[RMDB]
RNA sequence: GGGAACGACUCGAGUAGAGUCGAAAACAUUGUUCUGAUCAUCUGAAGAUCAGCUAUUAGAAGAGAAAGAUCAGUUAAGUCCUUUGGACCUGAUCAGCUUGAUACAAGAACUACUGGUUUCAACUUCAAAACGGGUGCUACUUCGGUAGCACCCGAACAAUCAGAUCAUGUUCGCAUGAUCUGAUUGAAAAGAAACAACAACAACAAC
Reactivity to 2A3 in 0.01 (KOAc 150mM, MgCl2 10mM, bicine 150mM(pH8.5), 24C), signal-to-noise 5, nucleotides 027 to 156: c040a070u070u130g040u200u070c020u010g020a010u010c020a060u020c080u200g150a150a030g000a050u020c000a000g010c000u130a140u280u160a110g060a130a010g030a050g080a100a170a010g000a010u000c000a000g010u080u200a180a020g010u040c020c000u070u190u300g020g000a020c020c000u000g020a020u020c010a000g040c010u020u050g020a030u050a140c060a110a030g050a110a010c020u120a030c020u140g030g060u010u030u070c050a090a070c040u160u100c070a030a040a080a080c030g000g000g000u010g010c000u000a000c000u000u060c130g050g000u000a000g000c000a000c000c000c000g000a010a010
Reactivity to DMS in 0.01 (KOAc 150mM, MgCl2 10mM, bicine 150mM(pH8.5), 24C), signal-to-noise 2, nucleotides 027 to 156: c050a120u010u000g010u000u000c010u000g000a050u000c000a160u000c080u000g020a190a240g020a020u000c000a040g010c140u000a070u010u000a180g010a060a090g010a080g000a170a140a100g000a020u000c010a070g020u000u000a070a070g020u010c010c000u010u020u000g030g010a050c020c000u040g020a160u010c120a100g000c130u000u000g010a090u010a130c040a050a050g000a020a040c020u000a070c020u000g000g010u000u010u000c020a060a190c020u000u000c030a040a070a080a130c020g030g010g020u000g020c010u000a010c000u000u000c290g040g040u010a010g060c000a000c000c030c000g000a000a040
Background
This 207-nucleotide RNA was probed chemically with 2A3 and DMS. The reactions ran in a buffer of 150 mM KOAc, 10 mM MgCl2 and 150 mM bicine (pH 8.5), at 24 C.